[RMDB]
RNA sequence: GGGAACGACUCGAGUAGAGUCGAAAAAGCACCUCUACGGAGGUGCACCCUAGCCCCGAUAGUAGUGGAAAUCCUUUUGUGCCGGGGUUCGGCACAAAAGAUUGCAACGAAUAGCGGGAUUAGCUAACGGUAUUCUAGAUUUCGAUCUAGAAUACCGAAAAGAAACAACAACAACAAC
Reactivity to 2A3 in 0.01 (KOAc 150mM, MgCl2 10mM, bicine 150mM(pH8.5), 24C), signal-to-noise 8, nucleotides 027 to 126: a000g000c000a010c020c000u000c000u030a050c220g110g000a000g000g000u000g000c000a020c000c000c010u010a000g010c000c000c000c000g010a020u020a030g060u010a010g010u020g090g250a040a010a010u080c040c040u010u000u000u010g010u000g000c010c000g090g000g090g000u110u300c010g010g000c000a000c000a000a000a000a000g000a000u000u020g030c070a040a010c010g040a130a060u030a040g040c000g000g000g010a010u060u170a020g000c010u030a140a060
Reactivity to DMS in 0.01 (KOAc 150mM, MgCl2 10mM, bicine 150mM(pH8.5), 24C), signal-to-noise 5, nucleotides 027 to 126: a090g010c000a000c000c000u000c000u010a140c160g040g010a010g000g010u000g010c010a000c010c000c000u000a020g020c020c000c000c000g000a040u000a010g010u000a140g000u010g010g050a300a010a010u000c090c030u000u000u000u000g010u000g010c020c000g020g000g040g040u030u030c000g010g000c020a020c010a000a000a000a010g000a010u000u000g000c300a210a020c010g000a130a230u020a040g000c010g000g000g000a060u010u020a090g000c030u000a040a270